[RMDB]
This 177-nucleotide RNA was probed chemically with 2A3 and DMS. It was measured as part of the RMDB library OK2TST. Values cover nucleotides 27 to 126. The 2A3 profile rests on 1,474 reads.
RNA sequence: GGGAACGACUCGAGUAGAGUCGAAAAGGACAUCAAAUGUUGGGGAGGCAAGCUCCUAAUUAUGAAGUUAAAAUGCGAAAAGGUGCAACUCUAUCCAAGUCCAAUUGCAUUGUCUCUUAGUUAUAGAGGACACACAAUAAUUCGUUAUUGUGUGUCCAAAAGAAACAACAACAACAAC
Reactivity to 2A3 in 0.01 (KOAc 150mM, MgCl2 10mM, bicine 150mM(pH8.5), 24C), signal-to-noise 2, nucleotides 027 to 126: g020g010a040c010a030u100c060a030a150a060u140g020u080u050g040g010g000g000a020g000g030c030a040a050g040c000u000c000c000u040a030a030u070u130a060u120g030a000a000g010u010u110a110a130a090a080u120g010c070g030a110a060a000a000g110g030u010g000c000a020a040c000u030c030u100a110u080c040c010a030a010g040u040c030c000a030a030u040u040g000c060a070u030u030g070u000c040u030c000u050u150a100g030u070u140a190u050a070g080a000
Reactivity to DMS in 0.01 (KOAc 150mM, MgCl2 10mM, bicine 150mM(pH8.5), 24C), signal-to-noise 4, nucleotides 027 to 126: g000g010a040c010a110u010c070a040a070a140u000g010u010u000g010g000g000g000a070g000g000c140a130a120g000c020u010c000c010u000a080a090u010u010a130u020g010a120a080g020u000u020a040a070a110a070u000g010c030g000a040a010a110a090g010g020u000g000c030a060a080c060u000c050u010a070u010c010c050a040a100g000u010c050c050a070a170u000u000g020c090a100u000u010g000u000c020u000c030u010u000a110g010u000u010a130u010a100g020a300